The record gives the reactivity of an RNA of 177 nucleotides to DMS. DMS adducts were read by reverse transcription with MarathonRT. The reactions ran in a buffer of 150 mM KOAc, 10 mM MgCl2 and 150 mM bicine (pH 8.5), at 24 C. Reactivities are given for positions 27 through 126.
RNA sequence: GGGAACGACUCGAGUAGAGUCGAAAAGAUAUGGAAGUACCACCGUGCAACAGCUACCUCAAGGCCGAAUACAUCGGAAACGAUGUAUUCGGCCUUGAGGUAGACAUGCACGUGGACUUCCUAAGUCCAAUGGACAUUAGUUCGCUAAUGUCCAUUGAAAAGAAACAACAACAACAAC
Reactivity to DMS in 0.01 (KOAc 150mM, MgCl2 10mM, bicine 150mM(pH8.5), 24C), signal-to-noise 2, nucleotides 027 to 126: g010a090u010a300u000g000g010a010a000g040u000a140c000c000a020c270c210g030u010g010c010a040a090c300a190g000c000u000a000c000c000u000c000a030a000g010g080c000c000g000a030a030u000a000c010a000u000c000g030g020a130a110a230c010g010a020u000g000u000a000u010u010c000g000g000c010c000u000u000g000a010g020g050u000a000g000a000c050a100u000g010c000a010c010g030u000g000g010a060c000u000u000c000c000u000a010a050g000u000c040